Conditions: 150 mM KOAc, 10 mM MgCl2 and 150 mM bicine (pH 8.5), 24 C. Structure probing data (DMS and 2A3) for a 177-nucleotide construct.
RNA sequence: GGGAACGACUCGAGUAGAGUCGAAAAGUGUUCGUACCUGGCGCAAGCCAGGGCAAGUGAGGCGCAAGCCUCGCUGACGGCGUGGAAAGGGCUCUCUCUGAGGCCCGAGUACGCUGAAAGUGCCACAAUACAGUUACUUCUUCGGAAGUAACUGUAUAAAAGAAACAACAACAACAAC
Reactivity to DMS in 0.01 (KOAc 150mM, MgCl2 10mM, bicine 150mM(pH8.5), 24C), signal-to-noise 9, nucleotides 027 to 126: g010u010g010u020u000c060g010u020a100c010c000u000g000g000c000g000c300a090a130g010c000c000a010g010g000g020c130a050a020g020u000g000a010g010g010c000g010c260a110a180g010c000c000u000c000g010c000u000g010a220c050g010g000c020g010u000g010g000a110a160a190g000g000g000c000u060c010u000c020u040c180u050g000a030g010g000c000c000c000g000a050g010u010a060c020g010c010u000g000a050a110a090g010u010g010c060c030a100c200a100
Reactivity to 2A3 in 0.01 (KOAc 150mM, MgCl2 10mM, bicine 150mM(pH8.5), 24C), signal-to-noise 7, nucleotides 027 to 126: g080u080g060u090u080c060g020u060a210c000c000u010g000g000c010g000c060a130a020g000c000c000a000g000g000g000c000a020a020g000u010g000a000g000g000c000g000c070a080a030g010c000c000u000c010g000c000u000g020a040c030g010g010c020g020u040g010g020a060a060a070g020g000g000c020u040c000u000c010u010c190u300g030a020g000g010c000c000c000g000a000g010u000a000c010g000c000u010g050a050a050a010g120u120g050c020c010a070c040a020